[RMDB]
RNA sequence: GGGAACGACUCGAGUAGAGUCGAAAAGAGUGGGUUCGCCCACUCAAAAAAACCUUUGUGCUUAUUUACUGGGAGCCAGGACGAUUCCCAUUGGGAAUUACCUGGCGAAGAACAGUAGGAUAAGCACUCUGGUAAAAAAGCAGUCUUCGGACUGCAAACUCAGUUUUAUAUUCGUAUAAAACUGAGUAAAAGAAACAACAACAACAAC
Reactivity to 2A3 in 0.01 (KOAc 150mM, MgCl2 10mM, bicine 150mM(pH8.5), 24C), signal-to-noise 1, nucleotides 027 to 156: g000a000g000u030g000g000g020u040u170c130g100c030c010c010a060c030u050c060a000a000a000a000a040a000a080c020c050u050u000u020g000u000g000c000u000u030a000u050u050u000a020c010u020g000g010g030a010g000c000c000a010g080g040a300c060g010a040u000u010c000c000c040a140u160u300g010g010g000a000a000u020u000a010c000c000u000g000g000c000g010a030a000g010a000a010c000a000g010u020a000g100g000a000u000a000a000g000c010a010c000u000c000u000g000g030u100a140a100a000a010a020a000g000c000a000g010u020c000u010u090c140g080g000a010c010u000g000c000a000a000
Reactivity to DMS in 0.01 (KOAc 150mM, MgCl2 10mM, bicine 150mM(pH8.5), 24C), signal-to-noise 1, nucleotides 027 to 156: g020a050g070u000g010g000g000u000u000c160g020c010c000c010a040c000u010c000a010a000a020a200a140a070a040c000c000u000u000u010g010u000g000c010u000u030a010u000u000u000a030c000u000g010g000g000a300g030c000c020a020g040g010a110c080g000a010u000u000c000c000c020a300u010u010g020g050g000a020a020u000u000a030c020c000u000g000g010c010g000a020a070g000a100a150c000a010g000u000a020g000g000a010u000a000a030g020c010a020c000u010c030u000g020g000u000a000a030a060a120a080a130g000c030a020g020u000c000u000u020c300g020g020a010c010u010g010c000a010a040